[RMDB]
RNA sequence: GGGAACGACUCGAGUAGAGUCGAAAACGAACUGAACGAUGAUGCAGCAACGAUCGAUCUUCUCAGUUAUUGCGUGAAAAAGAAUUUCGAACGUGUCUCGCUGCUCACACGUCUCGAAGAUCACCCAAUCACUAUUAGUGUUCGCACUAAUAGUGAUAAAAGAAACAACAACAACAAC
Reactivity to DMS in 0.01 (KOAc 150mM, MgCl2 10mM, bicine 150mM(pH8.5), 24C), signal-to-noise 9, nucleotides 027 to 126: c060g000a080a090c080u000g010a050a050c040g010a200u000g010a050u010g030c000a020g020c010a170a070c040g000a060u000c020g010a020u000c030u000u000c020u000c050a110g010u000u010a100u010u010g020c190g010u010g010a050a070a100a110a040g000a030a030u000u000u000c000g020a010a050c010g010u000g010u000c180u010c170g010c010u000g000c010u000c030a020c030a050c010g000u000c130u000c010g000a090a070g000a140u000c090a130c000c000c010a130
Reactivity to 2A3 in 0.01 (KOAc 150mM, MgCl2 10mM, bicine 150mM(pH8.5), 24C), signal-to-noise 9, nucleotides 027 to 126: c020g020a030a020c050u080g010a030a000c020g040a060u030g000a020u240g010c000a010g000c020a030a020c020g020a030u030c010g010a010u000c010u040u000c030u010c020a080g070u130u160a200u230u270g140c170g040u200g080a110a060a010a010a010g020a020a030u010u010u010c010g000a020a010c010g020u030g110u060c050u050c200g010c010u000g000c000u010c000a010c000a000c010g000u020c020u010c110g030a050a020g030a080u060c020a040c030c000c000a000